RNA sequence: GGGAACGACUCGAGUAGAGUCGAAAAGAUAUGGAGCCAUCGUAGGGAGUCGGUGGUCGGAAACGACCAUUCGACGACGAUCUACAUGGCUCCUAAGUCAAAAUCAUAGAUCUUCGGAUCUAUGAAAGAGUGUUUAGAACUUCGGUUCUAAACACUCAAAAGAAACAACAACAACAAC
Reactivity to DMS in 0.01 (KOAc 150mM, MgCl2 10mM, bicine 150mM(pH8.5), 24C), signal-to-noise 1, nucleotides 027 to 126: g010a050u010a300u000g010g000a050g010c000c000a010u000c300g070u000a000g010g000g010a120g030u000c000g010g000u000g010g010u000c000g030g000a070a070a160c010g010a050c000c020a010u000u030c050g050a030c000g020a100c300g000a130u000c000u010a000c000a010u020g000g010c020u000c000c000u000a000a100g020u010c060a150a160a120a140u000c000a000u000a010g010a000u000c010u010u020c240g060g000a000u000c000u000a000u000g000a000a000a050
Reactivity to 2A3 in 0.01 (KOAc 150mM, MgCl2 10mM, bicine 150mM(pH8.5), 24C), signal-to-noise 1, nucleotides 027 to 126: g000a010u050a000u030g010g000a010g020c000c000a030u080c250g020u010a010g000g110g180a270g060u010c010g000g050u000g010g010u000c000g000g000a020a030a000c010g010a010c010c030a060u300u300c020g000a010c020g010a010c000g030a060u020c010u000a000c000a000u010g000g000c000u010c000c010u000a020a000g000u000c010a040a000a050a170u080c000a010u000a010g030a010u000c030u030u130c300g150g020a010u000c000u000a020u000g000a000a000a000

Chemical mapping of a 177-nucleotide RNA with DMS and 2A3. The DMS profile rests on 985 reads. It was measured as part of the RMDB library TTRDES. Values cover nucleotides 27 to 126. DMS adducts were read by reverse transcription with MarathonRT.